[RMDB]
RNA sequence: GGGAACGACUCGAGUAGAGUCGAAAAUAGGGAACCAGAUCCACAUGCACGUAACAGCUAAGGAAUAUGGUGCCCGUGUCUCCAACCUACACAUGUACUCAGCUGUCUGUGCUGACGUCAUCCGCCGAUGGGUCUACCCUCUCACCCCAGAGGCGAACAUGCUAGUGAUAUUCGUAUCACUAGCAUGAAAAGAAACAACAACAACAAC
Reactivity to 2A3 in 0.01 (KOAc 150mM, MgCl2 10mM, bicine 150mM(pH8.5), 24C), signal-to-noise 7, nucleotides 027 to 156: u220a030g010g000g010a000a000c010c010a000g020a050u030c010c010a080c050a150u190g010c030a040c150g180u280a270a100c110a110g000c040u070a080a080g060g030a030a060u290a060u200g020g010u030g030c010c000c000g020u020g030u000c080u040c030c010a080a130c020c020u200a060c110a030c000a110u090g060u170a020c010u010c000a010g010c010u040g070u300c060u110g180u140g050c000u000g030a030c090g020u030c000a050u060c050c040g000c000c000g030a030u020g010g000g030u020c060u140a170c030c040c010u090c050u070c060a070c000c020c000c010a010g000a010g010g010c000g000a010a020
Reactivity to DMS in 0.01 (KOAc 150mM, MgCl2 10mM, bicine 150mM(pH8.5), 24C), signal-to-noise 3, nucleotides 027 to 156: u000a120g010g020g030a010a040c010c010a040g010a170u010c020c000a120c120a170u000g010c030a140c090g010u010a130a110c100a080g010c010u000a130a120g020g020a080a080u000a090u000g030g010u000g000c000c020c030g000u000g020u000c040u010c020c010a090a130c060c020u010a050c040a050c050a050u000g030u000a110c010u000c030a140g000c050u010g040u000c070u040g020u000g010c020u000g000a070c060g010u000c050a090u000c050c000g020c010c010g040a300u010g010g000g000u000c010u000a100c050c040c000u000c030u000c050a170c050c000c010c050a050g000a300g030g000c010g000a010a160
About this RNA: The data come from the RNA Mapping Database (RMDB), library OK3TST. An RNA of 207 nucleotides, treated with 2A3 and DMS and read out base by base. As a SHAPE reagent, 2A3 marks flexible, mostly unpaired nucleotides at the ribose 2'-OH. Conditions: 150 mM KOAc, 10 mM MgCl2 and 150 mM bicine (pH 8.5), 24 C. 2A3 adducts were read by reverse transcription with SuperScript II with manganese. The 2A3 profile rests on 4,559 reads.